[RMDB]
RNA sequence: GGGAACGACUCGAGUAGAGUCGAAAAGGGACUGCCGAGCUGAAAACGGUCAAUGGCCAGCCAUUAUGGAUUAUGAAUAAUGGGCCACAUAAUAUUCAGAUUAAAGAUGGAAAAGGUAACAUCGCGAUCGCAGCAAUUGAUUCGUCAAUUGCUGCGAAAAAGAAACAACAACAACAAC
Reactivity to 2A3 in 0.01 (KOAc 150mM, MgCl2 10mM, bicine 150mM(pH8.5), 24C), signal-to-noise 1, nucleotides 027 to 126: g030g000g000a030c010u070g000c020c010g070a020g020c030u020g060a010a000a000a110c000g020g000u110c030a050a030u080g040g040c030c010a070g060c070c020a000u010u010a010u030g190g020a080u110u110a120u300g070a020a070u010a020a010u000g010g110g000c020c000a100c000a000u190a100a010u060a040u070u020c010a000g040a060u090u140a220a120a040g010a010u000g000g050a110a000a000a140g000g100u080a030a030c010a060u040c010g090c130g100a010
Reactivity to DMS in 0.01 (KOAc 150mM, MgCl2 10mM, bicine 150mM(pH8.5), 24C), signal-to-noise 1, nucleotides 027 to 126: g010g020g030a080c080u020g020c020c030g030a090g000c010u010g000a090a090a110a140c070g000g000u020c030a050a140u000g050g000c020c030a150g020c080c010a000u000u000a020u010g000g000a140u000u010a140u010g000a110a050u000a080a040u000g000g000g010c010c080a100c090a010u000a060a080u010a090u000u000c010a050g000a110u020u020a010a110a250g000a090u000g000g000a000a040a030a120g040g010u020a050a130c090a020u010c060g020c130g010a140
Background: This 177-nucleotide RNA was probed chemically with 2A3 and DMS. The data come from the RNA Mapping Database (RMDB), library OK2TST. The DMS profile rests on 827 reads. For 2A3 the reverse transcriptase was SuperScript II with manganese. The reactions ran in a buffer of 150 mM KOAc, 10 mM MgCl2 and 150 mM bicine (pH 8.5), at 24 C. Values cover nucleotides 27 to 126. The 2A3 profile rests on 663 reads.